[RMDB]
RNA sequence: GGGAACGACUCGAGUAGAGUCGAAAAGAUAUGGAGCUCCGAACUCUUGGACCUCAGAUCGGAAACGAUCUGAGGCUAGAGUGAGGAGCUCCUAAGUCAAAUCAUCACCUCUUCGGAGGUGAUGAAAGCAUAUGUUGGUCUUCGGACCAACAUAUGCAAAAGAAACAACAACAACAAC
Reactivity to DMS in 0.01 (KOAc 150mM, MgCl2 10mM, bicine 150mM(pH8.5), 24C), signal-to-noise 1, nucleotides 027 to 126: g000a010u010a300u000g000g020a020g000c000u000c000c000g000a250a010c010u010c010u000u000g050g000a220c000c000u000c010a000g000a020u020c020g010g010a110a090a130c010g000a000u000c020u010g020a010g020g000c020u000a010g010a020g000u000g010a300g010g000a020g000c000u000c000c000u000a020a070g010u020c030a120a130a220u000c020a000u010c000a020c000c010u000c000u000u000c240g000g000a000g000g020u000g000a000u000g020a040a070a170